RNA sequence: GGGAACGACUCGAGUAGAGUCGAAAAGCCGCACUACUAUGCGGAUGGGGAGGAUGCGUAUGACAUGCGCAAGUAUCUGAAGCCGUCCAGUGCCUUGGCAGCGGCCAAUGGCACUUCAGGCAAGGCCGCCUAUUUUGCAAUUCGUUGCAAAAUAGGCAAAAGAAACAACAACAACAAC
Reactivity to DMS in 0.01 (KOAc 150mM, MgCl2 10mM, bicine 150mM(pH8.5), 24C), signal-to-noise 6, nucleotides 027 to 126: g010c000c010g000c040a070c210u010a140c190u010a140u000g010c020g010g010a020u000g010g000g020g010a170g020g020a140u000g000c030g020u000a060u000g020a110c170a300u000g010c020g020c020a040a090g010u010a170u010c050u010g000a130a160g000c010c010g000u000c130c130a020g000u000g000c000c010u000u000g010g010c000a230g030c230g020g020c000c000a000a020u010g030g000c000a000c000u000u000c140a070g000g010c060a070a110g010g000c200c140
Reactivity to 2A3 in 0.01 (KOAc 150mM, MgCl2 10mM, bicine 150mM(pH8.5), 24C), signal-to-noise 5, nucleotides 027 to 126: g030c010c020g100c000a030c040u300a070c030u070a120u150g010c020g000g030a020u020g030g020g020g000a030g080g020a060u060g010c010g020u030a040u150g160a100c060a160u080g000c020g000c000a010a030g050u030a060u080c050u090g060a080a010g000c000c010g030u030c010c010a000g000u010g000c000c000u010u000g030g000c030a140g200c150g300g000c060c020a020a070u170g010g000c000a000c000u010u060c060a000g000g000c030a040a110g040g010c020c020
An RNA of 177 nucleotides, treated with DMS and 2A3 and read out base by base. It was measured as part of the RMDB library OK2TST. The reactions ran in a buffer of 150 mM KOAc, 10 mM MgCl2 and 150 mM bicine (pH 8.5), at 24 C. Reactivities are rounded to 0.1 and cut off at 0 and 3. The 2A3 profile rests on 6,452 reads.